This 207-nucleotide RNA was probed chemically with 2A3 and DMS. Reactivities are rounded to 0.1 and cut off at 0 and 3. For DMS, 4,059 sequencing reads were counted. 2A3 adducts were read by reverse transcription with SuperScript II with manganese. High 2A3 reactivity points to a flexible backbone, as in loops and unpaired stretches. The RNA was probed in 150 mM KOAc, 10 mM MgCl2 and 150 mM bicine (pH 8.5) at 24 C.
RNA sequence: GGGAACGACUCGAGUAGAGUCGAAAAACCUUUGUGUACAGCCGAGAGUCGAACUACGUCUACUGACGCCCAUUGGGCGUCUAGUAGACGCGACUCGUUUGACGCUGUACACUCUGGUAAACACAUGGGACCGUACUUCGGUACGGUCCCAUGUGAACAAUGAAAAACGUUUCGACGUUUUUCAUUGAAAAGAAACAACAACAACAAC
Reactivity to 2A3 in 0.01 (KOAc 150mM, MgCl2 10mM, bicine 150mM(pH8.5), 24C), signal-to-noise 1, nucleotides 027 to 156: a000c000c000u020u010u000g000u000g000u000a000c000a000g010c010c000g060a040g000a000g060u010c010g060a090a060c190u120a070c250g000u000c000u020a000c000u000g000a000c000g010c010c020c060a300u220u270g000g000g040c000g000u000c000u020a000g000u000a020g010a000c010g000c000g000a010c000u010c000g000u030u060u070g010a010c010g020c010u000g000u000a000c000a000c000u000c000u000g000g000u030a060a120a010c000a000c000a010u000g010g000g040a000c000c010g000u010a000c000u010u090c230g030g000u010a000c000g000g010u010c000c000c000a000u000g000u000g000a000a000
Reactivity to DMS in 0.01 (KOAc 150mM, MgCl2 10mM, bicine 150mM(pH8.5), 24C), signal-to-noise 1, nucleotides 027 to 156: a020c000c010u010u000u000g010u000g020u000a020c000a000g030c000c000g020a260g020a030g020u000c010g030a140a300c030u010a080c020g020u000c010u000a000c010u020g000a020c000g030c000c000c000a300u000u000g110g030g010c000g050u000c000u000a000g020u000a000g000a000c000g000c010g010a020c020u010c010g010u020u010u010g010a150c240g000c000u020g010u000a040c010a000c030u000c020u000g010g000u000a050a120a150c010a020c010a000u000g010g000g020a020c000c020g010u010a020c010u000u020c300g040g040u010a000c020g020g010u000c000c040c010a000u010g010u000g000a090a180